[RMDB]
RNA sequence: GGGAACGACUCGAGUAGAGUCGAAAAGAACUGCUGAUCUGUUUGCGCGAAGUGUUGGCGCUGUGCCGCCAGCACCGUAGUCUCACUCAUCAAACACUCAGCCAACAAGAGACGCAUUCGCAAACUAUCCAUGAGUCAUCUUCGGAUGACUCAUGGAAAAAGAAACAACAACAACAAC
Reactivity to 2A3 in 0.01 (KOAc 150mM, MgCl2 10mM, bicine 150mM(pH8.5), 24C), signal-to-noise 1, nucleotides 027 to 126: g030a100a020c050u070g050c000u050g010a060u040c030u070g030u000u000u000g010c090g040c040g030a080a060g000u000g000u040u010g000g000c020g000c170u220g240u190g130c090c000g000c040c000a000g000c000a000c000c010g050u030a040g020u000c020u000c020a070c020u130c010a240u050c030a170a070a060c060a070c040u020c020a040g000c070c000a080a070c060a180a060g000a000g020a010c000g010c080a080u080u040c000g000c020a190a030a000c000u000a030
Reactivity to DMS in 0.01 (KOAc 150mM, MgCl2 10mM, bicine 150mM(pH8.5), 24C), signal-to-noise 1, nucleotides 027 to 126: g020a170a140c130u010g000c000u020g000a030u010c110u030g020u010u000u000g040c170g000c060g000a140a110g000u000g000u000u000g040g020c000g060c020u000g010u020g000c290c000g000c060c020a000g000c000a000c020c020g000u000a080g000u000c070u000c020a230c150u020c010a050u020c100a020a120a060c040a140c090u000c020a020g000c040c150a060a070c090a040a030g010a040g000a060c090g020c060a060u030u030c010g000c050a120a050a030c090u000a180
Notes:
Source: RMDB library OK2TST, as collected in RNAgym. An RNA of 177 nucleotides, treated with 2A3 and DMS and read out base by base. 2A3 adducts were read by reverse transcription with SuperScript II with manganese. For DMS the reverse transcriptase was MarathonRT. The RNA was probed in 150 mM KOAc, 10 mM MgCl2 and 150 mM bicine (pH 8.5) at 24 C.